[RMDB]
RNA sequence: GGGAACGACUCGAGUAGAGUCGAAAAGACAACAACGAAAAGAAAAAAAGAUGGAGAAUGAUCAAGUUCAGGUUGUUUGCAGUGGAGUAAUGGAAGAAUAAGCUGGAAACAUACCUCUUCGUUUUCUCCCUCGUUGAGAAACUGAGCGAUCAGAUGACGGCCAUUUUAAUUUCGAUUAAAAUGGCCGAAAAGAAACAACAACAACAAC
Reactivity to 2A3 in 0.01 (KOAc 150mM, MgCl2 10mM, bicine 150mM(pH8.5), 24C), signal-to-noise 1, nucleotides 027 to 156: g040a030c030a050a030c000a030a060c040g020a040a030a130a070g060a030a070a020a010a010a000a020g050a070u140g000g030a030g000a040a010u070g020a020u190c090a080a020g030u060u180c040a000g000g000u010u020g000u020u050u100g060c000a010g020u000g030g080a050g010u090a200a030u180g030g050a080a060g000a040a060u120a080a010g000c000u000g020g070a000a000a000c030a030u160a100c000c010u000c030u040u020c030g050u040u030u000u060c020u000c020c000c000u030c030g030u020u010g040a080g000a060a020a020c020u030g000a030g010c070g090a040u040c050a000g030a110u270g080a080
Background: The record gives the reactivity of an RNA of 207 nucleotides to 2A3. It was measured as part of the RMDB library OK3TST. The RNA was probed in 150 mM KOAc, 10 mM MgCl2 and 150 mM bicine (pH 8.5) at 24 C.